[RMDB]
RNA sequence: GGGAACGACUCGAGUAGAGUCGAAAAGAUAUGGACGGUGCAGGAGGGCAAUGUACAUCGGAAACGAUGUAUGACCUCCCCACCCUGUCACCGUCCUAAGUCAAACUGAAUCCUUCGGGAUUCAGAACGGUAAUACCCAGUUCGCUGGGUAUUACCGAAAAGAAACAACAACAACAAC
Reactivity to DMS in 0.01 (KOAc 150mM, MgCl2 10mM, bicine 150mM(pH8.5), 24C), signal-to-noise 2, nucleotides 027 to 126: g010a030u020a300u010g000g020a010c010g010g000u000g000c000a020g010g000a210g000g000g010c300a060a070u020g000u010a000c010a000u000c000g000g000a070a130a200c000g020a010u000g010u000a000u020g000a100c150c160u000c080c000c000c030a120c170c000c010u010g000u010c010a010c000c000g000u000c010c000u000a020a020g020u000c040a090a100a160c010u000g010a010a000u000c000c000u000u000c170g010g000g000a000u000u000c000a000g000a030a090
Reactivity to 2A3 in 0.01 (KOAc 150mM, MgCl2 10mM, bicine 150mM(pH8.5), 24C), signal-to-noise 2, nucleotides 027 to 126: g020a040u070a040u090g000g010a000c010g000g000u000g000c010a010g000g010a030g020g000g000c060a030a060u230g000u010a000c020a010u000c010g020g030a050a030a060c020g000a000u000g000u010a020u000g120a040c000c020u070c010c000c000c000a160c000c020c000u050g200u300c030a000c000c010g000u000c000c000u000a000a020g000u000c020a020a030a070c010u010g010a020a000u000c000c000u030u040c300g120g000g010a000u000u000c000a000g000a050a010
This 177-nucleotide RNA was probed chemically with DMS and 2A3. The data come from the RNA Mapping Database (RMDB), library TTRDEL. 2A3 adducts were read by reverse transcription with SuperScript II with manganese. The DMS profile rests on 1,732 reads. Reactivities are given for positions 27 through 126. The RNA was probed in 150 mM KOAc, 10 mM MgCl2 and 150 mM bicine (pH 8.5) at 24 C.